The record gives the reactivity of an RNA of 177 nucleotides to 2A3. Reactivities are rounded to 0.1 and cut off at 0 and 3. Conditions: 150 mM KOAc, 10 mM MgCl2 and 150 mM bicine (pH 8.5), 24 C. Values cover nucleotides 27 to 126.

[RMDB]
RNA sequence: GGGAACGACUCGAGUAGAGUCGAAAAGCGCCUUGGCCAUCCAAUGGUCGCGCAGGUCCAUGAUGACCAGCUUGGGCGACAACGGUUUGCCGGUGUUCCAGGCCGGGCAUUGCGACUGACAGCGUCCGCUCGGCUCGGGAUUCGUCCCGAGCCGAGCAAAAGAAACAACAACAACAAC
Reactivity to 2A3 in 0.01 (KOAc 150mM, MgCl2 10mM, bicine 150mM(pH8.5), 24C), signal-to-noise 2, nucleotides 027 to 126: g060c050g080c020c070u080u140g000g010c000c020a050u010c040c040a180a150u030g000g020u090c020g000c010g000c040a010g060g000u000c000c000a030u270g010a050u080g070a040c000c050a000g020c020u040u020g000g090g020c120g040a010c000a040a010c030g000g090u080u180u300g130c020c000g010g000u040g030u020u010c000c000a000g000g000c000c010g030g030g000c000a010u020u060g010c020g030a060c020u020g030a030c050a120g070c020g070u050c040c020